An RNA of 177 nucleotides, treated with 2A3 and read out base by base. It was measured as part of the RMDB library RFM100. For 2A3, 1,565 sequencing reads were counted. The reactions ran in a buffer of 150 mM KOAc, 10 mM MgCl2 and 150 mM bicine (pH 8.5), at 24 C.
RNA sequence: GGGAACGACUCGAGUAGAGUCGAAAAACAUAGGCCUUACGAGGCCUAUGAAGCCACGGCUUCCUGCGCCCCCGAUCGGGGCCGCCAACAGCGCUGGCGGCGGCGGCGGAGGCGGGGGCAGUGGCAAGUUACCAUCGAGGUUCGCCUCGAUGGUAACAAAAGAAACAACAACAACAAC
Reactivity to 2A3 in 0.01 (KOAc 150mM, MgCl2 10mM, bicine 150mM(pH8.5), 24C), signal-to-noise 2, nucleotides 027 to 126: a000c000a000u000a000g000g020c000c010u050u030a060c290g090a010g010g000c010c000u020a010u000g000a010a000g000c000c000a000c000g020g000c020u270u220c200c010u160g110c090g050c020c000c000c000c010g080a190u060c020g020g060g290g000c010c000g000c000c010a080a080c090a120g150c040g030c150u040g000g000c020g000g010c030g170g060c010g010g000c000g000g020a040g020g040c000g000g000g000g000g000c010a010g000u000g000g000c010a010a010